[RMDB]
RNA sequence: GGGAACGACUCGAGUAGAGUCGAAAAGGUUCAGGAGGUGGAACAGAUUGUAACUUGAUCUUCCAGAACGCAAAGCACGCAGGUUUGUCUCUAAUUGACCUAGCCUGGGGGGACUCAGCCGCAAUACCUUACUAUCGAACUUCGGUUCGAUAGUAAGAAAAGAAACAACAACAACAAC
Reactivity to 2A3 in 0.01 (KOAc 150mM, MgCl2 10mM, bicine 150mM(pH8.5), 24C), signal-to-noise 3, nucleotides 027 to 126: g050g000u030u040c020a010g060g000a010g000g100u080g040g030a080a050c010a060g080a110u080u150g050u120a050a090c060u040u130g020a010u060c010u050u000c030c010a030g020a060a010c040g020c090a110a030a030g030c040a010c120g030c030a020g000g060u020u080u070g060u030c010u020c000u080a140a230u060u100g040a010c000c020u010a020g010c020c000u030g010g010g010g000g000g030a020c000u020c050a010g040c030c000g040c020a040a030u060a100c010
Reactivity to DMS in 0.01 (KOAc 150mM, MgCl2 10mM, bicine 150mM(pH8.5), 24C), signal-to-noise 4, nucleotides 027 to 126: g000g020u000u000c040a090g010g010a070g010g020u010g000g010a060a090c150a060g000a080u000u010g020u010a110a130c180u020u000g000a050u000c030u000u000c020c010a090g000a080a070c110g000c060a050a080a110g000c070a030c140g020c070a050g010g020u000u010u000g010u000c020u000c130u020a080a110u010u010g010a040c030c100u000a080g010c020c010u000g000g000g010g010g000g000a100c070u010c050a060g000c030c040g000c090a080a070u020a050c170